This 177-nucleotide RNA was probed chemically with 2A3 and DMS. Values cover nucleotides 27 to 126. The data come from the RNA Mapping Database (RMDB), library M2PK90. The reactions ran in a buffer of 150 mM KOAc, 10 mM MgCl2 and 150 mM bicine (pH 8.5), at 24 C. Values are in units of 0.01, from 0 to 300, in steps of 10.
[RMDB]
RNA sequence: GGGAACGACUCGAGUAGAGUCGAAAAGUAAAGGCGGAGGAGGGUUUUGGCUUCCGCUCGGUCCGCCCGCGCGUGGUGUGGGCUGGAAUUCGUGUGUGGAGGAUGAUUAAUGCCGCGCGCCCAGGAAACUGGAGUAAGAGUUCGCUCUUACUCCAGUAAAAGAAACAACAACAACAAC
Reactivity to 2A3 in 0.01 (KOAc 150mM, MgCl2 10mM, bicine 150mM(pH8.5), 24C), signal-to-noise 2, nucleotides 027 to 126: g040u050a000a110a060g020g000c010g040g000a040g040g050a040g050g030g010u040u040u060u130g080g020c010u030u000c000c000g000c010u010c020g000g010u000c000c000g000c000c010c010g010c010g000c020g110u260g050g080u060g020u030g020g050g030c120u180g060g060a040a020u170u180c050g010u080g030u020g020u120g100g030a060g050g000a060u040g010a010u130u150a090a060u080g040c000c000g010c010g010c000g000c000c010c010a040g030g020a050a220
Reactivity to DMS in 0.01 (KOAc 150mM, MgCl2 10mM, bicine 150mM(pH8.5), 24C), signal-to-noise 2, nucleotides 027 to 126: g010u010a070a110a140g000g020c020g010g000a080g000g000a060g000g010g010u000u000u000u000g010g000c020u000u000c000c030g030c020u000c030g010g000u000c030c020g020c010c010c030g000c010g010c080g030u000g030g030u000g000u000g000g000g000c020u020g010g000a060a050u000u000c030g020u000g020u010g040u010g000g010a060g010g010a120u010g010a100u000u000a060a090u010g000c010c010g000c060g000c070g010c010c020c020a120g000g000a080a100